[RMDB]
RNA sequence: GGGAACGACUCGAGUAGAGUCGAAAAGGACAAGAAUUGCUUGAACACGGAAGGUGAAGGUUGCAGUGAGCUGAGACUGCACCACUGGCACUCCAGCCUGGGUGACAGAAUGAGACUCUGUCUCAAAUCAAUUACCUAACUUCGGUUAGGUAAUUGAAAAAGAAACAACAACAACAAC
Reactivity to 2A3 in 0.01 (KOAc 150mM, MgCl2 10mM, bicine 150mM(pH8.5), 24C), signal-to-noise 9, nucleotides 027 to 126: g040g000a010c040a030a040g070a120a120u120u110g030c020u060u070g030a080a010c060a020c090g060g050a040a040g090g020u060g070a090a030g070g010u120u090g000c020a010g010u020g040a050g050c060u060g030a020g040a100c010u020g010c010a000c010c000a080c020u010g010g000c010a000c060u020c020c030a040g020c030c020u030g030g000g000u050g010a030c010a010g090a090a110u160g020a030g010a050c020u020c100u300g050u020c010u000c000a020a050a010
Reactivity to DMS in 0.01 (KOAc 150mM, MgCl2 10mM, bicine 150mM(pH8.5), 24C), signal-to-noise 8, nucleotides 027 to 126: g000g000a090c080a070a080g010a130a060u020u010g010c030u000u010g020a040a080c120a070c070g010g010a100a110g010g010u010g010a090a080g010g010u010u020g020c030a030g020u000g010a090g030c050u000g000a100g010a110c030u000g000c020a040c020c020a110c030u000g000g010c020a060c090u020c080c060a100g000c040c030u000g010g000g010u000g010a070c040a010g010a100a090u010g000a080g000a070c020u020c100u020g000u000c000u000c020a050a060a130